[RMDB]
RNA sequence: GGGAACGACUCGAGUAGAGUCGAAAAGUGAGAAUGUUCGCAUUCUCACAAAUAAAUUCAGCGGUUUAAAUUAGCUCGGCAUAACCGCUGAUGCGGAGCUAAAAAGCUUGCCGUUCGCGGCAAGCAACAUUUAGAUAGGGUUCGCCCUAUCUAAAUGAAAAGAAACAACAACAACAAC
Reactivity to DMS in 0.01 (KOAc 150mM, MgCl2 10mM, bicine 150mM(pH8.5), 24C), signal-to-noise 4, nucleotides 027 to 126: g010u000g010a010g000a020a010u000g010u000u010c220g030c000a010u000u000c000u000c000a000c010a040a070a060u000a070a070a100u000u000c020a020g020c020g010g010u000u000u000a080a090a190u010u010a060g000c030u000c020g000g020c080a060u000a060a050c030c030g000c020u010g000a010u000g020c100g010g020a050g010c060u010a020a050a120a150a090g020c000u000u000g010c000c000g010u000u010c230g020c000g000g020c000a010a010g020c010a030a060
Reactivity to 2A3 in 0.01 (KOAc 150mM, MgCl2 10mM, bicine 150mM(pH8.5), 24C), signal-to-noise 4, nucleotides 027 to 126: g010u000g000a010g010a000a000u020g020u090u120c150g000c090a000u000u010c010u010c000a010c000a010a010a000u000a000a010a030u060u010c000a010g020c020g030g120u040u090u150a090a210a180u120u090a090g020c020u030c090g130g020c040a040u040a090a030c020c020g010c010u010g000a000u000g000c040g110g020a030g010c040u070a050a030a040a050a060g000c010u000u000g000c000c000g010u020u030c300g000c030g030g000c020a010a010g000c000a000a010
An RNA of 177 nucleotides, treated with DMS and 2A3 and read out base by base. Source: RMDB library M2PK50, as collected in RNAgym. The 2A3 profile rests on 6,548 reads. The DMS profile rests on 5,719 reads.